[RMDB]
RNA sequence: GGGAACGACUCGAGUAGAGUCGAAAAGUAAGUUUCGACUUACAACUACUCCUAAGUCUAAGCGAUAAGUGCUUGUAGGUGGAGUCGGAAACGACGUUGAAACCUACAACGGCACUUUUGACGCUUAGAUAUGGAUUGGCAGCAUGUUCGCAUGCAAUUUCUCUAGUGAUUUCGAUCACUAGAGAAAAAAAGAAACAACAACAACAAC
Reactivity to DMS in 0.01 (KOAc 150mM, MgCl2 10mM, bicine 150mM(pH8.5), 24C), signal-to-noise 2, nucleotides 027 to 156: g000u000a010a040g030u000u000u000c190g020a120c010u010u000a020c010a110a130c070u000a080c060u000c020c020u000a070a270g010u000c010u000a000a030g030c020g040a180u000a040a030g040u010g020c010u000u020g020u000a010g030g010u000g000g010a210g010u010c010g010g000a140a110a280c010g020a000c030g010u030u010g000a240a260a070c030c020u010a020c020a020a040c060g020g040c000a020c020u000u000u000u000g040a170c060g020c000u010u000a030g020a030u000a110u000g020g030a100u000u000g010g000c000a100g000c000a020u000g030u000u010c140g050c010a040u010g000c020a250a300

This 207-nucleotide RNA was probed chemically with DMS. The reactions ran in a buffer of 150 mM KOAc, 10 mM MgCl2 and 150 mM bicine (pH 8.5), at 24 C. Source: RMDB library RNAMAK, as collected in RNAgym. For DMS the reverse transcriptase was MarathonRT. High DMS reactivity at an A or C suggests that its Watson-Crick edge is free.